[RMDB]
Structure probing data (DMS and 2A3) for a 207-nucleotide construct. The data come from the RNA Mapping Database (RMDB), library M2RFPK. The reactions ran in a buffer of 150 mM KOAc, 10 mM MgCl2 and 150 mM bicine (pH 8.5), at 24 C. For DMS, 2,679 sequencing reads were counted. 2A3 adducts were read by reverse transcription with SuperScript II with manganese.
RNA sequence: GGGAACGACUCGAGUAGAGUCGAAAACCUCGCAUCGCAAGUUCGUGCUUACGACUUACACGUAGGGCGAGGGGUGGGCGAAAGUUGCCAUGAGACCGUAACUUUCGUAGUCAUUGAUAAAGGGGCACAUGCCCUGACUAGUUCGCUAGUCAGGGAAUCUACCGGCAUUGUUCGCAAUGCCGGUAGAAAAAGAAACAACAACAACAAC
Reactivity to DMS in 0.01 (KOAc 150mM, MgCl2 10mM, bicine 150mM(pH8.5), 24C), signal-to-noise 2, nucleotides 027 to 156: c010c000u010c020g060c150a150u000c090g020c000a050a030g030u010u010c130g070u000g000c100u000u010a020c000g000a050c010u010u010a120c140a120c050g030u010a090g000g020g040c030g020a070g010g010g000g030u000g020g030g010c000g020a000a050a060g020u000u000g000c030c050a190u000g010a160g000a250c090c130g050u000a000a040c000u000u010u000c010g020u000a090g010u000c050a160u000u010g000a180u000a060a070a100g000g000g020g030c040a070c050a140u000g000c000c000c000u000g000a000c000u000a000g010u000u000c300g000c000u000a010g000u000c030a010g000g040g010a000a020
Reactivity to 2A3 in 0.01 (KOAc 150mM, MgCl2 10mM, bicine 150mM(pH8.5), 24C), signal-to-noise 4, nucleotides 027 to 156: c010c000u030c010g030c010a080u060c030g020c080a030a050g060u130u070c030g010u090g160c060u110u190a030c020g040a040c040u070u110a020c080a020c090g080u100a110g040g020g030c020g030a030g000g010g000g040u120g030g030g010c000g020a000a010a000g000u000u010g010c030c020a080u140g110a050g020a180c050c060g010u010a000a000c000u000u010u000c020g010u010a040g020u030c020a060u030u150g050a020u110a090a090a070g000g000g000g020c050a040c020a120u170g040c000c000c010u000g000a000c000u000a000g030u090u050c180g010c090u000a000g000u000c000a000g000g000g000a000a020